[RMDB]
RNA sequence: GGGAACGACUCGAGUAGAGUCGAAAAUGCCCAGGCCGCCGACGGAUAUGCGUGUUCACCGGCUCUUGCGCAGGGACGCCUUCUCGUGGAAAGGGCGCCAGCUGGGGUGAGCGGCAUUCUAGCGACACUAGAUUCCUAGAUUCGUCUAGGAAUCUAGAAAAGAAACAACAACAACAAC
Reactivity to DMS in 0.01 (KOAc 150mM, MgCl2 10mM, bicine 150mM(pH8.5), 24C), signal-to-noise 5, nucleotides 027 to 126: u020g010c010c010c010a150g020g010c050c040g030c010c110g020a100c120g000g000a040u010a050u000g000c030g020u020g040u000u000c020a040c030c000g000g000c020u010c070u010u010g010c070g010c070a110g000g000g010a100c030g000c020c010u000u000c060u010c070g000u020g010g010a080a080a060g000g000g000c010g000c010c070a050g010c020u000g000g020g010g010u000g000a040g010c060g010g010c020a030u000u000c030u010a120g000c020g010a060c090a240
Reactivity to 2A3 in 0.01 (KOAc 150mM, MgCl2 10mM, bicine 150mM(pH8.5), 24C), signal-to-noise 9, nucleotides 027 to 126: u130g040c000c000c000a020g060g030c030c010g020c010c020g080a110c040g030g010a040u050a030u170g060c100g060u110g020u060u030c020a020c030c000g100g000c020u020c040u060u110g020c070g000c040a080g050g010g070a100c020g030c000c000u080u060c070u040c070g150u150g070g060a130a070a060g040g010g000c000g000c000c010a030g000c030u080g100g010g010g030u020g020a010g010c000g000g000c010a010u040u000c020u040a030g030c010g030a010c010a010